[RMDB]
RNA sequence: GGGAACGACUCGAGUAGAGUCGAAAACUGUUUCUGAUAAUUGAACACCAUUAUAAGUACAUUUAAUCUGCAUUUCUCUAUUCCAUUCCUGCAAAUCUUCAGACCAUUCAGGAAGUUGCAAGAAUAACUGAGCUAGAGCGUUCGCGCUCUAGCUCAGAAAAGAAACAACAACAACAAC
Reactivity to 2A3 in 0.01 (KOAc 150mM, MgCl2 10mM, bicine 150mM(pH8.5), 24C), signal-to-noise 1, nucleotides 027 to 126: c060u000g000u030u000u000c000u000g150a060u060a250a000u150u000g140a200a150c110a030c030c000a060u180u240a100u110a000a080g130u170a060c000a100u020u020u020a110a170u000c000u100g110c010a000u000u000u030c000u030c000u010a240u100u080c170c000a110u000u000c000c000u040g070c000a030a090a090u000c000u040u110c000a000g070a140c010c040a220u210u000c030a010g010g010a000a000g030u000u040g110c040a000a010g000a060a000u080a130a000

The record gives the reactivity of an RNA of 177 nucleotides to 2A3. For 2A3 the reverse transcriptase was SuperScript II with manganese. Conditions: 150 mM KOAc, 10 mM MgCl2 and 150 mM bicine (pH 8.5), 24 C. It was measured as part of the RMDB library OK1LIB.